[RMDB]
RNA sequence: GGGAACGACUCGAGUAGAGUCGAAAAGAAAACAAAACAAAAGAAAAUGCCCACCGGGUGUGAAGCUGGUCAAAGAUCCGGCGUUUUAUCCGGUUAAGCCCAUACGGACAGGCGGGGCAGCUGCCGACGUGAUGUAGGUCUUCGGACCUGCAUCACGAAAAGAAACAACAACAACAAC
Reactivity to 2A3 in 0.01 (KOAc 150mM, MgCl2 10mM, bicine 150mM(pH8.5), 24C), signal-to-noise 6, nucleotides 027 to 126: g030a000a040a010a010c050a000a100a020a010c070a040a110a060a020g170a030a150a030a020u080g010c000c000c000a010c000c010g000g020g000u060g030u050g070a030a020g000c010u010g010g030u070c100a240a070a070g100a100u070c000c000g000g000c010g010u150u100u060u090a000u000c000c000g000g000u010u020a030a000g000c010c010c000a060u090a100c010g030g020a030c010a030g000g020c010g000g000g000g000c000a000g000c020u070g000c000c000g020a050
Reactivity to DMS in 0.01 (KOAc 150mM, MgCl2 10mM, bicine 150mM(pH8.5), 24C), signal-to-noise 4, nucleotides 027 to 126: g020a110a090a110a080c120a090a080a070a070c190a100a100a150a140g010a100a070a110a030u010g000c000c000c010a090c000c030g000g010g010u010g010u010g020a020a040g000c000u010g000g010u000c080a110a120a120g020a040u040c000c000g000g010c010g020u020u000u000u010a010u000c010c020g000g010u000u040a060a070g010c010c000c000a080u020a070c040g000g000a030c030a110g010g000c000g010g000g000g000c000a060g000c130u050g000c010c000g000a300
Source information:
This 177-nucleotide RNA was probed chemically with 2A3 and DMS. For DMS the reverse transcriptase was MarathonRT. The 2A3 profile rests on 9,364 reads. Conditions: 150 mM KOAc, 10 mM MgCl2 and 150 mM bicine (pH 8.5), 24 C. Reactivities are rounded to 0.1 and cut off at 0 and 3.